Chemical mapping of a 177-nucleotide RNA with DMS. Conditions: 150 mM KOAc, 10 mM MgCl2 and 150 mM bicine (pH 8.5), 24 C. The DMS profile rests on 1,644 reads. Values cover nucleotides 27 to 126. In probing experiments dimethyl sulfate is read out at A N1 and C N3, which are open when not base-paired.
[RMDB]
RNA sequence: GGGAACGACUCGAGUAGAGUCGAAAAGAUAUGGAACCUAUAGGGAGCUGGGAUUCUGACUAGUACCAUCGGAAACGAUGGUACUAGUCAGAAUCUCAGCAGCGUUGAUCUAUAGGGUUCCUAAGUCGUAUAACUCUUUCUUCGGAAAGAGUUAUACAAAAGAAACAACAACAACAAC
Reactivity to DMS in 0.01 (KOAc 150mM, MgCl2 10mM, bicine 150mM(pH8.5), 24C), signal-to-noise 2, nucleotides 027 to 126: g000a150u000a300u020g000g010a020a080c010c010u000a010u000a010g000g020g010a290g040c000u000g000g010g000a010u010u000c000u000g030a010c000u020a000g010u000a000c000c000a000u010c030g020g000a170a100a290c000g010a000u000g010g030u000a000c000u000a000g010u010c000a000g000a020a000u000c010u000c020a010g030c000a030g010c240g010u000u020g000a190u010c000u000a010u000a010g010g020g010u010u000c000c010u000a070a150g000u000c140